[RMDB]
RNA sequence: GGGAACGACUCGAGUAGAGUCGAAAAUAUCCCCGGGGAAACCUGGAGGAAGGUGGGGAUGACGUCAAGUCCGCAUGGCCCUUAUGGGCUGGGCCACACACGUGCUACAAUGGCAAUUACAAUGGGAGAAGAUUCCUUAGUUCGCUAAGGAAUCUUCAAAAGAAACAACAACAACAAC
Reactivity to DMS in 0.01 (KOAc 150mM, MgCl2 10mM, bicine 150mM(pH8.5), 24C), signal-to-noise 1, nucleotides 027 to 126: u010a170u010c000c000c000c000g010g020g000g000a060a050a140c050c030u000g010g010a090g010g000a080a040g000g000u000g000g000g000g020a100u010g000a090c020g020u000c150a100a200g020u000c030c110g000c050a090u020g010g000c000c000c030u000u010a080u000g030g020g000c030u000g000g020g000c000c080a060c160a050c170a090c130g000u020g000c020u030a090c050a050a080u010g010g000c090a050a080u020u010a100c100a120a070u000g000g020g000a230
Reactivity to 2A3 in 0.01 (KOAc 150mM, MgCl2 10mM, bicine 150mM(pH8.5), 24C), signal-to-noise 1, nucleotides 027 to 126: u100a020u050c010c010c010c010g000g000g000g000a080a010a010c010c000u030g020g020a070g060g020a110a020g030g060u200g060g070g000g000a000u050g000a020c000g010u170c120a090a070g050u000c000c040g050c070a080u120g030g000c000c000c000u040u160a120u230g000g010g000c000u040g020g040g000c020c000a010c000a010c030a010c050g050u020g000c020u160a110c100a090a210u150g030g000c030a000a110u150u060a070c070a010a190u140g050g060g000a120